[RMDB]
RNA sequence: GGGAACGACUCGAGUAGAGUCGAAAAGUAUUAAGUGUGCAAUAGCAUUAUGUUUUUAAAAAGUACAUACCUUAAUUUUAAGAUAUUGCUAAAAAUAGUUAACGAUCAUCUGUGCCUUCAGUGAGUCAUAAUCUUGCUGGUAGAAGGUCUUGGCUCACCAUAAUUGCGAUUUCGAUCGCAAUUAUGGAAAAGAAACAACAACAACAAC
Reactivity to DMS in 0.01 (KOAc 150mM, MgCl2 10mM, bicine 150mM(pH8.5), 24C), signal-to-noise 1, nucleotides 027 to 156: g030u000a000u010u010a060a080g050u010g000u000g000c000a130a130u000a240g000c020a030u000u000a090u010g020u010u030u010u040u000a050a060a070a140a060g020u000a030c040a030u010a010c000c010u000u000a030a180u000u000u000u000a020a050g000a010u020a010u000u000g010c030u020a030a060a050a060a110u010a080g020u000u000a030a150c070g000a080u010c050a060u010c050u000g050u000g030c050c010u000u000c040a050g030u000g000a030g040u000c040a070u000a060a070u010c030u000u000g030c000u000g050g020u030a050g040a050a060g040g020u000c020u010u000g000g000c010u010c030a100
Reactivity to 2A3 in 0.01 (KOAc 150mM, MgCl2 10mM, bicine 150mM(pH8.5), 24C), signal-to-noise 4, nucleotides 027 to 156: g050u050a040u230u180a210a060g050u070g020u030g090c020a070a110u030a130g000c040a030u030u100a060u190g050u050u040u020u130u240a090a100a030a020a010g060u060a050c020a030u110a060c030c000u080u090a160a170u200u210u140u130a030a010g010a030u030a040u060u040g010c010u030a010a000a000a160a130u130a100g050u080u060a080a020c070g030a070u050c010a020u030c080u020g070u140g030c000c020u070u060c010a020g010u010g030a010g000u020c050a100u030a150a080u100c010u030u020g010c020u010g000g090u020a050g050a090a020g010g000u000c010u010u050g020g010c010u010c020a020
Structure probing data (DMS and 2A3) for a 207-nucleotide construct. 2A3 adducts were read by reverse transcription with SuperScript II with manganese. The data come from the RNA Mapping Database (RMDB), library OK3TST. The 2A3 profile rests on 2,077 reads. Conditions: 150 mM KOAc, 10 mM MgCl2 and 150 mM bicine (pH 8.5), 24 C. Values cover nucleotides 27 to 156. The DMS profile rests on 2,161 reads.